The record gives the reactivity of an RNA of 207 nucleotides to 2A3.
RNA sequence: GGGAACGACUCGAGUAGAGUCGAAAAUAGUGCCUUCGGGCACUAAAAAUCCUAAGUCCCUAGAGGUAUUUCCAGGCGACGAUCAUAUCGGAAACGAUAUGGGAGCCUGGGUACUCCCCACCUAGGGAUAUGGAAAAGCUAUCUCUUCGGAGAUAGCCCUUCCUUUGUAGUUCGCUACAAAGGAAGGAAAAGAAACAACAACAACAAC
Reactivity to 2A3 in 0.01 (KOAc 150mM, MgCl2 10mM, bicine 150mM(pH8.5), 24C), signal-to-noise 2, nucleotides 027 to 156: u040a000g000u000g000c010c010u040u060c300g030g000g010c000a000c000u000a010a020a000a020a000u020c010c000u040a130a070g040u000c010c000c010u020a020g010a030g070g000u030a040u030u190u060c000c000a000g000g000c000g010a230c000g000a170u000c000a000u000a000u010c000g030g000a070a120a060c010g000a000u000a010u020g000g000g000a020g000c020c010u010g020g010g020u000a000c000u030c050c030c020c020a030c000c000u010a000g000g000g020a000u010a020u060g030g010a060a080a010a010g030c020u070a000u060c010u000c000u090u110c280g100g000a000g000a000u000a000g000c000